[RMDB]
Structure probing data (2A3) for a 177-nucleotide construct.
RNA sequence: GGGAACGACUCGAGUAGAGUCGAAAAUAACUGGUUACUAGUUCCAAGGGAAGCUUAUGCUGUAGAUUCUCCCUAAAGAUAGAAAUUACAAAGCAAGCUUUAUUUGUAAAAUUAGUGAAUCUGCAGGCUCGGGAGUAGUGUUCGCACUACUCCCGAGAAAAGAAACAACAACAACAAC
Reactivity to 2A3 in 0.01 (KOAc 150mM, MgCl2 10mM, bicine 150mM(pH8.5), 24C), signal-to-noise 1, nucleotides 027 to 126: u180a000a030c050u030g000g030u010u070a030c010u000a030g030u000u060c040c090a050a020g020g030g030a000a000g030c000u130u100a110u300g100c000u000g000u000a050g020a040u000u000c020u140c050c000c000u080a130a150a000g050a030u110a070g060a000a080a020u060u010a000c000a000a170a000g040c030a090a080g000c010u000u220u190a020u130u120u000g060u010a030a000a030a030u000u000a110g070u080g050a000a000u000c050u000g000c000a000g010g000
For 2A3, 517 sequencing reads were counted.
It was measured as part of the RMDB library OK1LIB.
Values cover nucleotides 27 to 126.